[RMDB]
RNA sequence: GGGAACGACUCGAGUAGAGUCGAAAAGCCACAAAGGAUGUUGUCGGCGCGUACCGUUUUCUGCAGCGGGUGUGGCGCUUGGUCGUCGACGAGCACACCGGCGAAACUCGGGUGGCUGACGGCGUGGGAGGUCCGGCAUAUUCGUAUGCCGGACCUCAAAAGAAACAACAACAACAAC
Reactivity to 2A3 in 0.01 (KOAc 150mM, MgCl2 10mM, bicine 150mM(pH8.5), 24C), signal-to-noise 1, nucleotides 027 to 126: g000c120c040a220c110a040a250a000g180g100a100u110g000u030u020g000u020c010g000g000c120g000c000g220u100a040c000c000g040u040u100u000u000c000u080g030c010a070g070c010g000g190g000u130g050u070g120g040c070g020c010u020u120g060g030u160c000g010u020c000g010a070c200g030a000g160c000a000c040a040c010c010g030g000c040g070a080a000a000c160u090c010g020g000g000u000g050g040c040u000g000a000c000g000g010c050g070u070g110g040